[RMDB]
An RNA of 177 nucleotides, treated with DMS and 2A3 and read out base by base. For DMS the reverse transcriptase was MarathonRT.
RNA sequence: GGGAACGACUCGAGUAGAGUCGAAAAAGGAUAGGAUUCGUCCUAUCCUACACCAAAACCUCCUGGCGGUCCGGCGCCGGCCCCGCCGGGAAGGCCGCCUUAUUGGUAGCUGGUUCGCCAGCUACAAGUAAUGUUCCCAAUUCGUUGGGAACAUUACAAAAGAAACAACAACAACAAC
Reactivity to DMS in 0.01 (KOAc 150mM, MgCl2 10mM, bicine 150mM(pH8.5), 24C), signal-to-noise 3, nucleotides 027 to 126: a030g010g010a020u000a000g010g000a030u000u010c180g020u000c000c010u010a010u000c010c000u000a040c110a250c050c040a080a050a120a240c090c040u000c030c050u000g010g000c000g010g000u020c030c030g020g030c110g010c100c060g020g000c060c100c300c030g010c000c030g010g000g010a080a040g010g010c050c030g020c050c000u010u010a040u010u010g020g040u000a010g000c000u000g000g010u000u030c210g010c000c010a010g000c000u000a000c010a030a100
Reactivity to 2A3 in 0.01 (KOAc 150mM, MgCl2 10mM, bicine 150mM(pH8.5), 24C), signal-to-noise 3, nucleotides 027 to 126: a010g000g010a000u010a000g000g010a010u030u080c190g050u030c050c000u000a000u000c000c000u000a000c040a060c010c020a000a060a050a130c010c010u040c000c020u000g000g010c000g000g030u050c030c020g030g060c170g140c130c060g050g020c090c050c020c030g010c000c000g000g010g000a000a000g030g010c020c030g010c020c010u090u160a160u050u160g080g000u000a000g000c000u000g030g030u040u030c230g070c040c000a000g000c000u000a000c010a010a000
Conditions: 150 mM KOAc, 10 mM MgCl2 and 150 mM bicine (pH 8.5), 24 C. The data come from the RNA Mapping Database (RMDB), library M2PK50. Values cover nucleotides 27 to 126.